Record summary
This 177-nucleotide RNA was probed chemically with 2A3 and DMS. In probing experiments dimethyl sulfate is read out at A N1 and C N3, which are open when not base-paired. It was measured as part of the RMDB library TTRDES. Conditions: 150 mM KOAc, 10 mM MgCl2 and 150 mM bicine (pH 8.5), 24 C. The 2A3 profile rests on 2,435 reads. 2A3 is a SHAPE reagent: it acylates the 2'-hydroxyl of flexible nucleotides of all four kinds.
RNA sequence: GGGAACGACUCGAGUAGAGUCGAAAAGAUAUGGACCUGCAGGUUUCAUCCGUUGAAAGCAACUCGGAAACGAGUUGCUGGAGGAUGAACUGGAAGGGUCCUAAGUCAAACAUCCCUUCGGGGAUGAGUAAGUUCCUAACUUCGGUUAGGAACUUACAAAAGAAACAACAACAACAAC
Reactivity to 2A3 in 0.01 (KOAc 150mM, MgCl2 10mM, bicine 150mM(pH8.5), 24C), signal-to-noise 1, nucleotides 027 to 126: g010a000u040a010u160g000g000a020c000c060u030g060c190a130g000g100u110u200u260c000a000u030c000c030g240u260u020g000a000a000a000g040c010a000a020c000u010c000g040g050a000a060a020c000g030a000g000u020u010g000c000u010g000g000a010g000g000a010u000g010a000a000c010u030g050g170a130a160g070g020g000u020c000c000u000a060a010g030u010c020a060a080a150c000a010u010c000c000c000u030u030c300g120g000g000g010a000u010g010a010
Reactivity to DMS in 0.01 (KOAc 150mM, MgCl2 10mM, bicine 150mM(pH8.5), 24C), signal-to-noise 2, nucleotides 027 to 126: g000a030u000a260u010g010g000a010c000c000u010g040c250a190g000g010u010u000u010c010a000u000c010c010g030u000u000g000a220a150a030g000c000a010a000c000u000c000g000g000a050a070a140c000g040a020g000u000u000g000c000u000g030g020a020g020g000a000u000g000a000a030c040u010g020g040a170a260g010g010g000u000c000c000u010a020a080g010u000c030a110a190a290c000a000u010c010c000c000u000u030c180g000g000g000g000a000u000g000a100